[RMDB]
RNA sequence: GGGAACGACUCGAGUAGAGUCGAAAAAAACUAUGUGUAAGAAAAGAAUGUGCUCUUAGUCCCUAGUUGAUUUGCACUCAUUCUUGGAGAUAAUGACAGGGCAGUGCUCCAACCCAUCUCCAUGAUGGCUUGCUGCUCUGUGACAGUGGACUUAUCAAGCGAUAUAUUAGUUCGCUAAUAUAUCGCUAAAAGAAACAACAACAACAAC
Reactivity to DMS in 0.01 (KOAc 150mM, MgCl2 10mM, bicine 150mM(pH8.5), 24C), signal-to-noise 4, nucleotides 027 to 156: a050a040a050c040u010a040u000g020u000g020u000a070a090g010a090a090a040a070g010a060a070u000g010u000g010c060u010c040u000u000a100g000u000c020c000c030u000a270g010u000u010g030a100u000u000u000g010c030a120c060u000c070a110u000u000c030u000u000g030g010a140g000a050u000a040a060u000g010a070c040a100g020g000g010c000a050g020u010g010c190u000c080c050a050a070c190c010c010a030u000c010u010c150c160a110u010g010a040u000g010g030c060u000u000g020c000u000g000c020u000c020u010g010u000g010a050c070a020g010u010g010g000a120c060u010u000a040u000c060a130
Reactivity to 2A3 in 0.01 (KOAc 150mM, MgCl2 10mM, bicine 150mM(pH8.5), 24C), signal-to-noise 4, nucleotides 027 to 156: a000a000a000c110u110a140u090g100u010g030u040a080a050g040a080a180a040a020g060a050a090u050g010u020g030c020u030c010u090u030a020g010u010c010c000c020u030a050g010u020u110g060a130u070u020u160g030c040a030c000u030c030a040u030u040c020u020u030g030g030a050g020a090u100a140a050u160g050a000c000a000g020g020g030c000a010g000u010g080c060u070c110c020a020a040c020c000c000a000u010c030u120c150c070a080u300g000a010u000g000g020c030u030u130g000c010u010g000c000u000c010u010g000u020g000a000c010a010g040u100g050g060a060c000u030u110a080u220c050a050
About this RNA: Source: RMDB library OK3TST, as collected in RNAgym. Structure probing data (DMS and 2A3) for a 207-nucleotide construct. Reactivities are rounded to 0.1 and cut off at 0 and 3. 2A3 adducts were read by reverse transcription with SuperScript II with manganese. For DMS, 10,097 sequencing reads were counted.